[RMDB]
RNA sequence: GGGAACGACUCGAGUAGAGUCGAAAAGAUAUGGACCCGACCCGAUAAGAACCACUCGGAAACGAGUGAGUUCUUUUGACGGCAAGGGUCCUAAGUCAAAACACGUAUAAGUUCGCUUAUACGUGAACAUGGGAUAGAACUUCGGUUCUAUCCCAUGAAAAGAAACAACAACAACAAC
Reactivity to DMS in 0.01 (KOAc 150mM, MgCl2 10mM, bicine 150mM(pH8.5), 24C), signal-to-noise 4, nucleotides 027 to 126: g000a020u010a300u000g020g010a010c010c000c000g000a300c300c000c000g000a140u000a010a000g000a000a010c000c000a000c000u000c000g000g010a140a070a130c000g000a010g000u010g000a060g010u000u000c000u010u010u010u000g010a300c300g000g010c050a030a200g010g000g000u010c000c000u010a010a090g020u000c030a060a040a120a180c010a000c000g010u000a000u000a010a010g020u000u010c250g020c010u000u000a000u000a010c000g010u000g010a050a100
Reactivity to 2A3 in 0.01 (KOAc 150mM, MgCl2 10mM, bicine 150mM(pH8.5), 24C), signal-to-noise 2, nucleotides 027 to 126: g010a040u040a030u120g030g000a010c000c000c000g060a200c040c010c010g060a100u050a250a000g000a000a010c000c000a010c000u010c020g040g010a090a060a040c010g000a000g010u000g010a000g000u000u010c000u000u000u010u020g020a000c010g000g060c110a080a170g030g020g010u000c000c000u030a000a010g010u010c020a080a000a040a080c010a000c000g020u000a000u010a020a000g080u050u120c230g050c190u010u010a000u000a000c010g000u000g000a000a010